[RMDB]
RNA sequence: GGGAACGACUCGAGUAGAGUCGAAAAUUUGGCCUGUCAGAAAGGCAGAGCUUCACCAUAGGGACAGCUCUUUGAGAUGACACCUGCCAACCUCUCUAUAUGGAUGGGGACGCAGAGUUCAGAGAGGCUGGAGACUCGCUCAGUCUCACAGUGGGUCCAGCAAUAUUCCCUUCGGGGAAUAUUGCUGAAAAGAAACAACAACAACAAC
Reactivity to 2A3 in 0.01 (KOAc 150mM, MgCl2 10mM, bicine 150mM(pH8.5), 24C), signal-to-noise 2, nucleotides 027 to 156: u160u020u120g030g000c000c010u040g010u000c040a080g210a300a230a050g030g000c010a000g000a020g000c020u240u210c010a120c140c010a120u250a120g060g020g050a030c000a020g010c000u020c000u020u010u030g070a100g000a070u170g020a030c000a020c040c000u000g020c000c010a030a000c070c030u050c000u040c000u070a190u060a130u300g020g030a010u100g000g000g000g000a010c030g000c010a000g040a070g110u070u020c020a010g000a000g020a000g170g020c000u000g040g000a080g000a010c000u000c020g030c010u030c050a010g000u010c020u000c030a100c000a000g070u090g030g050g000u010c000
Reactivity to DMS in 0.01 (KOAc 150mM, MgCl2 10mM, bicine 150mM(pH8.5), 24C), signal-to-noise 1, nucleotides 027 to 156: u010u000u020g030g020c030c000u000g000u010c110a140g000a140a160a140g010g020c060a070g010a120g020c010u000u000c060a050c030c020a180u000a140g010g000g010a140c090a050g000c040u000c030u000u010u000g010a050g020a300u020g010a300c080a100c010c010u000g010c000c010a140a290c000c010u000c120u010c060u010a260u000a180u010g000g010a050u000g000g000g030g020a300c160g050c010a080g000a110g020u010u020c010a080g000a060g000a010g000g030c000u000g000g000a180g000a040c000u000c040g000c040u000c040a170g010u000c040u000c040a060c020a030g010u000g010g010g000u000c050